RNA sequence: GGGAACGACUCGAGUAGAGUCGAAAAGACAUGCACGAAAACAAAAGUUUAAAGCGUGUCGUGUGUGUAUGAUAACAAGCGACAUGCUUUAGGUUUAUUUUGCAGCGCCGGAUGUUUCCAUUUGGCUGCAUCAGAUCAGUUUCGACUGAUCUGAUGCAAAAGAAACAACAACAACAAC
Reactivity to 2A3 in 0.01 (KOAc 150mM, MgCl2 10mM, bicine 150mM(pH8.5), 24C), signal-to-noise 4, nucleotides 027 to 126: g050a030c030a060u120g060c030a020c090g130a060a040a030a020c120a020a120a010a020g000u000u050u020a000a000a000g000c000g000u000g000u010c000g010u040g010u000g030u010g010u020a160u300g210a100u070a150a010c040a070a010g010c000g010a000c010a010u000g000c010u010u000u000a000g000g000u000u020u010a090u030u060u040u040g030c030a040g010c020g000c050c020g040g010a020u020g020u000u050u040c050c020a040u030u030u030g050g010c000u020
Reactivity to DMS in 0.01 (KOAc 150mM, MgCl2 10mM, bicine 150mM(pH8.5), 24C), signal-to-noise 2, nucleotides 027 to 126: g020a100c070a030u000g010c060a110c110g010a070a030a020a120c100a120a060a050a100g010u010u020u000a000a000a010g050c000g000u000g000u000c000g010u040g020u010g000u000g000u000a050u010g010a140u040a070a000c020a010a140g000c010g000a010c010a000u000g030c000u040u010u000a000g000g000u000u000u000a080u020u000u000u000g020c030a060g010c110g000c080c030g000g020a050u000g010u010u020u000c100c030a300u000u000u010g000g000c080u020
About this RNA
The data come from the RNA Mapping Database (RMDB), libraries RFM100 and RFMREP. Structure probing data (2A3 and DMS) for a 177-nucleotide construct. DMS adducts were read by reverse transcription with MarathonRT. Values cover nucleotides 27 to 126.